An RNA of 177 nucleotides, treated with DMS and 2A3 and read out base by base. The RNA was probed in 150 mM KOAc, 10 mM MgCl2 and 150 mM bicine (pH 8.5) at 24 C. For 2A3, 673 sequencing reads were counted. Source: RMDB library OK1LIB, as collected in RNAgym. Values cover nucleotides 27 to 126. As a SHAPE reagent, 2A3 marks flexible, mostly unpaired nucleotides at the ribose 2'-OH.
RNA sequence: GGGAACGACUCGAGUAGAGUCGAAAAGAUGAGGUUAAGAACUAGAGAGAACUUGAGACGCGUGAUGAAGCUCAAGAGAAAACGCGAGAAUGAGCAAGUGUGCUAGACGAAGCACACAAGAGGAAGAAAUCCCAUCGACUUUCGAGUCGAUGGGAUUAAAAGAAACAACAACAACAAC
Reactivity to DMS in 0.01 (KOAc 150mM, MgCl2 10mM, bicine 150mM(pH8.5), 24C), signal-to-noise 2, nucleotides 027 to 126: g010a160u030g000a180g010g000u000u000a080a080g040a140a040c070u000a040g000a120g000a150g000a110a110c040u000u030g000a040g000a080c030g010c010g000u000g020a110u030g000a080a090g000c020u000c010a030a050g020a190g000a070a070a060a080c080g010c100g000a120g000a120a040u000g020a050g030c060a080a140g000u000g020u000g000c000u000a060g000a120c230g000a110a070g000c000a000c020a000c010a070a040g010a110g000g040a050a010g000a060
Reactivity to 2A3 in 0.01 (KOAc 150mM, MgCl2 10mM, bicine 150mM(pH8.5), 24C), signal-to-noise 1, nucleotides 027 to 126: g070a040u130g000a000g040g000u160u100a020a000g000a020a000c000u000a040g000a000g000a010g000a200a000c000u040u000g000a000g080a070c020g020c040g050u030g100a090u120g090a050a030g000c030u110c000a000a000g010a000g120a080a000a000a000c040g000c060g050a040g050a060a070u100g000a040g050c090a080a100g000u000g010u000g060c000u000a030g000a130c070g100a240a000g000c030a000c000a000c010a010a020g050a030g050g000a000a000g040a040